[RMDB]
RNA sequence: GGGAACGACUCGAGUAGAGUCGAAAAGCUCAUCCUGAGACCGGGGAGCUUCGAAGAUCUCUCUAUUCUCCAGAAAGGAGGAAGGAGCUCUCGAACGCCCCCCCGACCCUCGGAUGGGCCGCUUCCGUAAGCGCCCACUUCGGUGGGCGCAAAAGAAACAACAACAACAAC
Reactivity to DMS in 0.01 (KOAc 150mM, MgCl2 10mM, bicine 150mM(pH8.5), 24C), signal-to-noise 3, nucleotides 027 to 129: g010c000u010c020a010u010c040c080u100g020a050g030a130c120c050g000g050g010g030a300g090c020u020u000c000g020a160a000g040a000u010c040u030c000u080c040u040a260u070u040c000u010c000c020a130g150a180a210a170g020g000a010g000g000a040a130g000g030a020g010c130u050c000u000c040g020a030a020c190g090c080c000c050c010c030c060c050g050a080c000c090c060u020c070g010g000a060u010g000g040g030c070c030g000c160u000u010c010c030g020u070a010a130
Reactivity to 2A3 in 0.01 (KOAc 150mM, MgCl2 10mM, bicine 150mM(pH8.5), 24C), signal-to-noise 5, nucleotides 027 to 129: g000c000u000c000a010u010c000c080u210g010a000g000a000c030c000g010g000g000g000a000g000c000u010u000c020g020a130a050g000a030u000c000u010c030u000c030u050a300u160u010c010u010c000c000a080g300a290a220a090g060g000a000g010g000a010a040g000g000a000g010c010u000c000u000c000g010a010a030c120g000c000c010c000c000c000c000c000g010a020c040c010c010u000c000g000g000a000u000g000g000g000c030c000g010c010u020u000c000c010g060u090a070a080